The record gives the reactivity of an RNA of 177 nucleotides to DMS and 2A3. Reactivities are given for positions 27 through 126.

[RMDB]
RNA sequence: GGGAACGACUCGAGUAGAGUCGAAAAAAAAGAUAUGGAAUACAUGGAGAGACAUCGUUUAACUAUAUCAUCGGAAACGAUGAUACGAAUUAAAUUGUCUCUAUGAAGUGUAUUCCUAAGUCAAAAACUCUUUUCAUAUGUUCGCAUAUGAAAAGAGAAAAGAAACAACAACAACAAC
Reactivity to DMS in 0.01 (KOAc 150mM, MgCl2 10mM, bicine 150mM(pH8.5), 24C), signal-to-noise 2, nucleotides 027 to 126: a080a020a090a060g000a030u040a300u010g000g000a030a010u000a000c000a000u000g010g000a010g000a000g000a000c010a030u020c220g020u000u000u020a000a050c120u030a170u010a000u000c000a010u000c000g000g000a160a040a200c000g040a020u000g000a010u000a010c040g000a080a090u000u000a020a030a010u010u000g000u000c000u000c000u000a180u030g000a090a150g000u000g000u000a010u000u000c000c000u000a020a040g020u010c010a090a070a100a100a160
Reactivity to 2A3 in 0.01 (KOAc 150mM, MgCl2 10mM, bicine 150mM(pH8.5), 24C), signal-to-noise 2, nucleotides 027 to 126: a000a000a070a020g060a040u090a030u090g000g000a000a000u000a020c010a010u010g020g030a020g010a010g010a010c010a040u170c100g020u090u020u040a060a040c080u030a060u020a000u300c020a000u000c010g010g010a020a010a070c000g010a020u000g000a000u010a010c000g090a130a150u110u090a120a020a050u140u080g020u000c000u000c020u050a300u030g000a010a010g040u000g020u000a000u000u040c000c000u000a050a010g000u040c040a070a040a080a130a230